Source: RMDB library OK1LIB, as collected in RNAgym.
The record gives the reactivity of an RNA of 177 nucleotides to 2A3 and DMS.
For DMS, 4,160 sequencing reads were counted.

RNA sequence: GGGAACGACUCGAGUAGAGUCGAAAAUAGAUGGGAGUCGGUCCAGUCUGAUUCGCAGCGCGGUGGGUUCGGUUGAGGAGCAGGGGUUCUCCCAGUAGAUUGUAGGCCGUCGUCUUGGCACCAAAAAUAUCACUAUCCGGUUCGCCGGAUAGUGAUAAAAAGAAACAACAACAACAAC
Reactivity to 2A3 in 0.01 (KOAc 150mM, MgCl2 10mM, bicine 150mM(pH8.5), 24C), signal-to-noise 3, nucleotides 027 to 126: u170a020g170a140u170g020g000g000a030g030u060c050g020g020u020c020c010a000g050u010c010u050g080a160u140u070c060g000c060a080g000c030g000c020g040g080u100g010g020g060u070u110c030g000g060u050u030g030a080g030g050a040g010c030a030g000g030g020g040u050u020c040u020c020c000c040a020g030u050a030g020a070u030u130g040u090a030g040g040c000c020g050u040c010g000u000c020u010u120g010g000c040a020c020c040a030a000a000a120a000
Reactivity to DMS in 0.01 (KOAc 150mM, MgCl2 10mM, bicine 150mM(pH8.5), 24C), signal-to-noise 2, nucleotides 027 to 126: u040a090g030a130u040g020g000g000a050g000u000c020g010g000u010c020c020a080g040u050c010u050g030a060u000u030c040g000c010a040g000c060g010c030g000g000u010g010g000g000u020u000c110g000g030u020u020g000a080g010g000a080g000c070a040g000g030g020g000u000u020c020u020c000c000c000a090g010u010a070g000a120u010u000g000u000a120g030g000c030c030g040u000c050g000u010c030u000u000g010g000c070a100c040c100a010a060a040a080a070

The RNA was probed in 150 mM KOAc, 10 mM MgCl2 and 150 mM bicine (pH 8.5) at 24 C.